[RMDB]
RNA sequence: GGGAACGACUCGAGUAGAGUCGAAAACGUCGAGUUCCGGCUCGACGCCGCCGAAUCCGAGCAGUCCAAGGCAACCACGCUGGACCUACUCGCACGGGCCGGGGCCAUCAGCACCAGAACGAAGGUCAAGUACCGGUCACCGGACCUGGCCGACGAGCUAAUUGAGUGUAUUCGUACACUCAAUUAGAAAAGAAACAACAACAACAAC
Reactivity to 2A3 in 0.01 (KOAc 150mM, MgCl2 10mM, bicine 150mM(pH8.5), 24C), signal-to-noise 4, nucleotides 027 to 156: c020g010u010c010g010a010g020u070u120c090c150g120g000c010u010c000g020a030c020g010c010c030g040c030c020g070a110a040u060c030c020g010a020g020c050a020g030u010c020c020a060a050g070g000c050a100a080c070c070a110c080g030c050u060g000g020a040c000c020u060a060c020u000c040g010c020a060c060g000g000g000c010c050g020g000g000g000c030c010a080u110c040a030g110c040a030c040c000a080g090a230a040c060g040a110a030g010g020u020c010a040a020g040u120a300c030c040g000g030u210c090a130c230c020g040g000a040c000c000u020g000g000c000c010g040a090c020g010a010g020
Reactivity to DMS in 0.01 (KOAc 150mM, MgCl2 10mM, bicine 150mM(pH8.5), 24C), signal-to-noise 2, nucleotides 027 to 156: c020g000u000c020g000a060g010u010u000c200c230g010g000c030u000c020g000a070c010g030c030c030g040c040c060g000a040a140u010c030c010g000a050g030c060a110g000u010c000c010a040a110g040g160c030a060a190c150c040a120c130g040c020u000g010g000a060c030c050u030a020c010u000c000g050c050a160c060g000g050g010c030c010g010g030g000g040c000c040a100u000c060a120g000c030a090c010c000a160g000a150a170c040g000a300a290g000g000u000c020a110a040g030u010a110c040c010g000g030u000c070a070c100c010g040g020a020c020c040u030g040g000c000c010g010a190c000g000a160g000